Notes: Source: RMDB library OK1LIB, as collected in RNAgym. The record gives the reactivity of an RNA of 177 nucleotides to 2A3. 2A3 adducts were read by reverse transcription with SuperScript II with manganese. The 2A3 profile rests on 442 reads. Reactivities are given for positions 27 through 126.
RNA sequence: GGGAACGACUCGAGUAGAGUCGAAAAAGCACAAUGACUAAUCGCCAGUACCAUCAGAAAAUGCUUAAGUCCAUGGCUGCAACUCGUGGAGCGACUUGCGUCAUUGGUACUACAAAGUUCUACGGUGUCUGCGUGUCGUCUUCGGACGACACGCAGAAAAAGAAACAACAACAACAAC
Reactivity to 2A3 in 0.01 (KOAc 150mM, MgCl2 10mM, bicine 150mM(pH8.5), 24C), signal-to-noise 2, nucleotides 027 to 126: a030g050c030a090c110a000a170u160g000a070c050u200a040a120u160c010g060c080c020a000g000u000a020c050c000a020u150c080a000g140a060a050a000a070u160g020c010u110u110a010a000g000u000c000c000a000u080g000g020c020u250g000c020a070a000c000u100c010g060u250g120g020a000g080c000g040a020c000u000u040g000c000g020u000c000a020u080u300g030g000u030a070c070u190a030c050a000a120a000g000u020u010c000u070a020c000g100g000u020g030